[RMDB]
RNA sequence: GGGAACGACUCGAGUAGAGUCGAAAACGUAGCACGUUGUGGGCGAAGUGACUAAAACUUACACAACUCAUCCAAAGCACCCUGCCCGUCGGGCGGCUGCGGAUUAAAUCAGUAGACACGGCUAAGCAUGUAGUACCGACAGCGGAGUACUGGCGGAUCUUCUGACAUAGUUCGCUAUGUCAGAAGAAAAAGAAACAACAACAACAAC
Reactivity to DMS in 0.01 (KOAc 150mM, MgCl2 10mM, bicine 150mM(pH8.5), 24C), signal-to-noise 1, nucleotides 027 to 156: c040g020u010a140g040c070a040c000g010u010u000g080u000g000g010g070c050g000a070a090g020u000g000a160c100u000a040a050a100a100c110u000u000a090c020a030c010a040a100c020u000c080a130u000c010c010a060a300a050g030c030a050c010c010c010u000g020c000c000c100g000u030c030g050g000g050c080g000g080c020u000g010c300g000g020a090u020u020a060a090a130u000c070a080g010u020a040g000a070c020a030c040g000g020c040u000a080a080g010c030a090u000g010u010a150g000u000a140c000c000g000a060c010a020g010c000g000g000a170g010u030a090c020u010g010g010c030g000g010a160
Reactivity to 2A3 in 0.01 (KOAc 150mM, MgCl2 10mM, bicine 150mM(pH8.5), 24C), signal-to-noise 2, nucleotides 027 to 156: c030g020u030a020g020c010a000c080g000u010u010g020u030g000g040g000c030g050a100a030g050u030g060a050c120u200a030a010a090a090c030u100u140a030c050a010c010a020a080c070u060c090a040u010c010c010a000a000a030g000c000a010c000c000c020u030g020c010c010c010g010u040c010g020g010g000c060g030g000c020u030g000c020g000g000a000u000u020a020a030a020u090c000a000g020u010a010g020a000c040a020c150g020g000c050u050a050a030g010c010a010u100g020u080a000g050u070a120c010c030g050a060c060a030g030c060g060g080a110g030u100a050c030u010g030g040c020g010g020a050
Record summary
Conditions: 150 mM KOAc, 10 mM MgCl2 and 150 mM bicine (pH 8.5), 24 C. Chemical mapping of a 207-nucleotide RNA with DMS and 2A3. For DMS the reverse transcriptase was MarathonRT. Values cover nucleotides 27 to 156. For 2A3, 1,589 sequencing reads were counted.